[RMDB]
RNA sequence: GGGAACGACUCGAGUAGAGUCGAAAAAGUAACUUAAGACGCGGAAGGGAGAGUCAAAAAGAGAAAGAGACCUAAAGGGUGAAAGCGAAUCGGGGAAGAUAAGCUAGCAGCAAAAAGGAACCGAUUCGCCAUGCCUCGGAUUCGUCCGAGGCAUGGCAAAAGAAACAACAACAACAAC
Reactivity to 2A3 in 0.01 (KOAc 150mM, MgCl2 10mM, bicine 150mM(pH8.5), 24C), signal-to-noise 1, nucleotides 027 to 126: a000g130u060a000a000c010u160u000a070a070g030a000c000g000c030g160g010a030a040g030g040g000a000g000a000g100u050c010a040a200a000a000a000g120a000g060a000a010a000g120a000g000a020c000c000u050a050a000a250g100g020g000u060g180a180a040a000g070c020g000a000a000u000c000g000g000g000g000a050a050g070a040u120a070a000g040c020u030a040g010c060a000g010c040a000a000a000a260a000g190g000a000a000c000c000g000a000u030u030c000
Reactivity to DMS in 0.01 (KOAc 150mM, MgCl2 10mM, bicine 150mM(pH8.5), 24C), signal-to-noise 1, nucleotides 027 to 126: a130g040u010a070a210c240u020u010a040a140g000a060c100g000c080g000g000a050a030g020g000g060a010g000a080g000u010c080a000a130a060a120a020g000a100g000a020a040a100g000a050g000a020c000c040u000a000a040a060g000g010g000u010g000a020a020a000g000c030g000a000a000u000c000g000g000g000g090a090a180g000a000u020a060a180g000c110u000a050g030c300a200g030c140a000a000a050a250a050g010g010a300a080c040c040g000a000u000u000c000
Overview:
The record gives the reactivity of an RNA of 177 nucleotides to 2A3 and DMS. The DMS profile rests on 882 reads. The RNA was probed in 150 mM KOAc, 10 mM MgCl2 and 150 mM bicine (pH 8.5) at 24 C. For DMS the reverse transcriptase was MarathonRT.